[RMDB]
RNA sequence: GGGAACGACUCGAGUAGAGUCGAAAAGAUAUGGAUCGCGGGAGCUGAUAUUCGGAAACGAAUAAUAGCAUCGAUCGUCGAUCCUAAGUCAAAGCGGUUGGACUAUCUUCGGAUAGUCCAACCGCAAGCUGUAUGGUAUCUUCGGAUACCAUACAGCAAAAGAAACAACAACAACAAC
Reactivity to DMS in 0.01 (KOAc 150mM, MgCl2 10mM, bicine 150mM(pH8.5), 24C), signal-to-noise 1, nucleotides 027 to 126: g030a040u010a280u010g000g010a020u000c010g000c020g000g000g000a030g020c010u020g000a100u000a000u000u000c000g010g000a050a060a210c000g000a010a010u000a010a050u000a030g010c000a230u000c090g000a060u000c030g000u020c010g010a040u000c000c000u010a000a100g000u010c020a040a100a120g000c000g000g010u010u000g010g000a050c010u000a000u000c000u000u000c200g010g000a010u000a000g000u000c000c000a000a000c000c000g000c000a000a020
Reactivity to 2A3 in 0.01 (KOAc 150mM, MgCl2 10mM, bicine 150mM(pH8.5), 24C), signal-to-noise 1, nucleotides 027 to 126: g020a000u100a030u140g020g000a000u020c010g040c020g010g020g040a040g050c010u030g030a070u020a020u060u000c020g000g020a070a050a030c020g030a010a020u010a030a020u090a030g040c090a170u280c060g050a070u060c000g030u120c050g000a000u040c000c010u040a150a010g030u010c060a130a000a030g040c000g000g000u040u000g000g000a020c030u040a010u000c000u070u130c300g000g020a000u000a000g000u000c010c010a000a000c020c020g030c010a000a010